[RMDB]
RNA sequence: GGGAACGACUCGAGUAGAGUCGAAAAGAAGAUACCAGGUGCUAGGGCGUAGGGAUAAGCUUUACGCCCGUGACGGAAACAACCGAGACUAAUGUUAAGGUCUCUAAAAUUGGCUAAGUGCGAUUUAUCUAUAUUUACAGUUCGCUGUAAAUAUAGAAAAAGAAACAACAACAACAAC
Reactivity to 2A3 in 0.01 (KOAc 150mM, MgCl2 10mM, bicine 150mM(pH8.5), 24C), signal-to-noise 2, nucleotides 027 to 126: g060a060a020g010a020u100a120c020c060a070g080g070u170g040c030u110a050g000g000g000c000g010u000a020g000g040g020a100u080a300a110g100c000u000u010u000a010c020g000c000c000c000g000u010g000a000c010g000g020a050a080a000c030a010a010c060c060g000a010g000a010c010u030a140a050u160g060u190u120a130a030g020g020u000c000u000c000u040a060a090a080a130u150u100g120g000c030u040a150a070g050u080g100c010g010a030u050u070u040a060
Reactivity to DMS in 0.01 (KOAc 150mM, MgCl2 10mM, bicine 150mM(pH8.5), 24C), signal-to-noise 4, nucleotides 027 to 126: g010a110a100g000a140u010a140c040c020a100g010g020u000g010c030u010a160g030g000g020c000g020u000a000g000g000g010a300u020a070a190g000c000u000u010u000a010c030g030c010c000c000g020u010g010a040c070g010g010a130a070a080c120a050a050c080c130g000a040g010a030c010u000a080a130u010g010u000u010a100a160g010g010u000c010u010c010u010a040a030a050a070u000u010g010g020c030u010a050a090g020u000g010c050g000a070u010u010u000a100

Annotation:
This 177-nucleotide RNA was probed chemically with 2A3 and DMS. The RNA was probed in 150 mM KOAc, 10 mM MgCl2 and 150 mM bicine (pH 8.5) at 24 C. The 2A3 profile rests on 1,574 reads. As a SHAPE reagent, 2A3 marks flexible, mostly unpaired nucleotides at the ribose 2'-OH. For DMS, 4,274 sequencing reads were counted. For 2A3 the reverse transcriptase was SuperScript II with manganese. For DMS the reverse transcriptase was MarathonRT.